[RMDB]
RNA sequence: GGGAACGACUCGAGUAGAGUCGAAAAACCGGAGGCCGACAAUCCAGGGAACCGGAUGUCAUCACGUUGUUGCAGUACCAGAUGGCAUCUUAAAUCCGAUCCGCAAAUAAGCAUGUAGAAAGCUGAUAAAAUCACACACACUUCGGUGUGUGUGAAACUUACCAUUCACGUUCGCGUGAAUGGUAAGAAAAGAAACAACAACAACAAC
Reactivity to DMS in 0.01 (KOAc 150mM, MgCl2 10mM, bicine 150mM(pH8.5), 24C), signal-to-noise 1, nucleotides 027 to 156: a070c030c000g010g000a100g020g020c020c000g020a050c070a080a110u020c030c030a110g020g000g010a040a150c060c050g000g000a010u020g020u010c010a060u000c020a200c130g020u000u020g000u000u010g000c030a130g060u010a040c030c050a250g000a040u010g000g020c010a030u000c010u000u000a090a090a100u000c050c050g050a090u000c010c030g020c090a050a050a070u000a080a160g020c030a120u050g010u000a120g010a070a060a060g060c040u010g010a120u000a050a080a050a210u000c030a020c030a010c000a000c000a050c030u000u000c300g090g000u000g010u000g020u010g020u000g000a020a020a080
Reactivity to 2A3 in 0.01 (KOAc 150mM, MgCl2 10mM, bicine 150mM(pH8.5), 24C), signal-to-noise 1, nucleotides 027 to 156: a000c040c010g000g000a040g020g040c020c010g030a080c070a060a050u000c000c040a020g000g010g060a020a030c070c050g000g000a000u000g000u010c000a000u000c010a020c140g060u050u090g060u060u010g000c030a050g070u110a050c030c040a040g010a000u020g000g000c010a000u000c000u020u050a030a050a010u000c020c000g000a010u010c030c040g030c080a000a040a080u150a060a030g010c020a010u080g020u090a030g120a110a080a000g000c020u030g020a010u190a140a120a020a000u020c000a000c000a000c010a000c000a000c000u010u090c140g070g000u000g010u030g010u000g000u000g000a000a000a000